The data come from the RNA Mapping Database (RMDB), library OK1LIB. Structure probing data (2A3 and DMS) for a 177-nucleotide construct.

[RMDB]
RNA sequence: GGGAACGACUCGAGUAGAGUCGAAAAGUGCGGAGUGAAAUUCAUAGGUGCAUCGCCAAUUUGGCGGAACGACCCGGUACUCCGCGUAGUCGCGACGUAAACGUUCAGUGUUGGCGUUCAGGCCUCAACUCGUACUAGUCUUCGGACUAGUACGAGUAAAAGAAACAACAACAACAAC
Reactivity to 2A3 in 0.01 (KOAc 150mM, MgCl2 10mM, bicine 150mM(pH8.5), 24C), signal-to-noise 2, nucleotides 027 to 126: g190u070g000c010g000g000a050g000u150g130a070a240a290u200u240c130a150u130a130g060g000u070g090c040a010u000c030g000c000c000a080a170u140u120u300g010g000c000g080g000a080a020c080g000a070c000c050c000g000g000u000a010c020u000c050c000g000c000g000u000a010g000u000c110g000c010g150a040c000g000u050a010a030a030c000g030u100u000c180a070g000u030g000u050u040g050g000c000g000u060u000c060a000g060g000c010c010u120c030a060
Reactivity to DMS in 0.01 (KOAc 150mM, MgCl2 10mM, bicine 150mM(pH8.5), 24C), signal-to-noise 4, nucleotides 027 to 126: g000u030g030c000g000g020a040g020u000g020a050a060a140u040u030c130a140u050a170g000g000u000g030c160a100u010c010g000c000c010a060a180u030u040u040g010g000c000g010g020a040a060c160g020a070c040c010c140g020g060u010a060c010u000c000c000g030c000g030u010a030g020u000c090g000c060g000a040c010g020u030a050a090a040c020g000u010u010c060a140g000u020g020u020u000g000g000c060g010u000u010c110a120g000g000c040c010u000c050a150